[RMDB]
RNA sequence: GGGAACGACUCGAGUAGAGUCGAAAAGAAACCACUGGCUAUCGUAGAGACGCUCCUUACACAACUACGGUGUAAGGAUGGACUUGUGCUCAACGGUAGGCCAGUGGUUGUAUCAGCACAAUGAAGGAUACAACCAUAUUGCAGUUACGAGACGAAAGUAGGUAUUUAAAUUCGUUUAAAUACCUACAAAAGAAACAACAACAACAAC
Reactivity to 2A3 in 0.01 (KOAc 150mM, MgCl2 10mM, bicine 150mM(pH8.5), 24C), signal-to-noise 7, nucleotides 027 to 156: g040a030a040a000c010c000a000c010u020g010g000c000u000a000u010c000g000u010a030g000a000g010a020c010g010c010u010c000c000u000u000a000c010a010c000a050a180c190u230a080c090g050g000u010g000u000a000a000g020g010a000u020g010g010a090c070u160u220g060u200g090c000u000c010a020a010c000g030g000u010a010g070g020c000c000a000g000u000g000g000u000u000g000u000a000u000c020a010g110c040a010c070a120a220u280g070a200a040g110g010a010u020a050c010a020a020c030c020a050u090a070u160u210g050c030a010g040u080u070a050c090g020a060g070a120c080g060a090a110a000
Reactivity to DMS in 0.01 (KOAc 150mM, MgCl2 10mM, bicine 150mM(pH8.5), 24C), signal-to-noise 4, nucleotides 027 to 156: g000a090a070a060c010c000a030c010u000g010g010c010u000a000u000c030g050u000a110g020a030g010a070c000g010c130u010c010c000u000u000a020c000a010c010a040a090c090u000a210c180g020g040u010g000u010a020a020g000g000a010u010g000g010a090c070u000u010g020u000g040c010u000c000a120a040c030g000g000u020a030g020g020c010c010a020g010u000g000g010u000u000g010u000a030u000c030a130g020c090a130c080a100a110u010g010a180a160g020g010a150u000a010c060a080a110c050c030a120u010a120u010u010g010c020a100g010u000u000a130c130g000a120g010a180c070g000a070a100a230
The data come from the RNA Mapping Database (RMDB), library OK3TST. This 207-nucleotide RNA was probed chemically with 2A3 and DMS. For DMS the reverse transcriptase was MarathonRT. The reactions ran in a buffer of 150 mM KOAc, 10 mM MgCl2 and 150 mM bicine (pH 8.5), at 24 C.